[RMDB]
RNA sequence: GGGAACGACUCGAGUAGAGUCGAAAAUGUAGGGUGGCUGAUCCACUGAAACGACUAUUUAAACUUGGAAAGCCACUGGCUGCCGACGACGAACAUGAUGACGAUCGGCGCCGAGCACUCUAUGAGGCAACCAGACAGUGUUCGCACUGUCUGGUUGAAAAGAAACAACAACAACAAC
Reactivity to 2A3 in 0.01 (KOAc 150mM, MgCl2 10mM, bicine 150mM(pH8.5), 24C), signal-to-noise 2, nucleotides 027 to 126: u090g010u050a080g150g020g070u030g040g030c000u030g010a300u030c000c000a020c030u030g030a050a060a010c070g110a110c080u080a300u070u130u080a140a100a070c010u000u000g010g000a000a000a000g000c020c010a020c000u000g030g000c020u120g000c000c000g020a000c010g000a020c010g070a090a020c090a180u240g020a070u190g040a100c020g110a150u030c000g010g040c000g000c010c000g000a030g000c030a100c030u050c000u020a020u200g070a050g040g000
Reactivity to DMS in 0.01 (KOAc 150mM, MgCl2 10mM, bicine 150mM(pH8.5), 24C), signal-to-noise 3, nucleotides 027 to 126: u000g010u000a100g020g000g030u010g030g020c010u000g000a130u010c010c010a030c270u000g000a030a110a140c180g020a100c190u000a100u010u020u010a080a080a180c100u000u000g010g000a010a280a020g010c010c060a020c050u000g000g010c030u020g080c010c020g000a010c020g000a150c040g000a080a080c190a140u000g020a120u030g000a110c040g000a100u010c010g000g010c050g000c000c000g020a090g000c180a050c050u010c010u000a040u000g000a100g010g000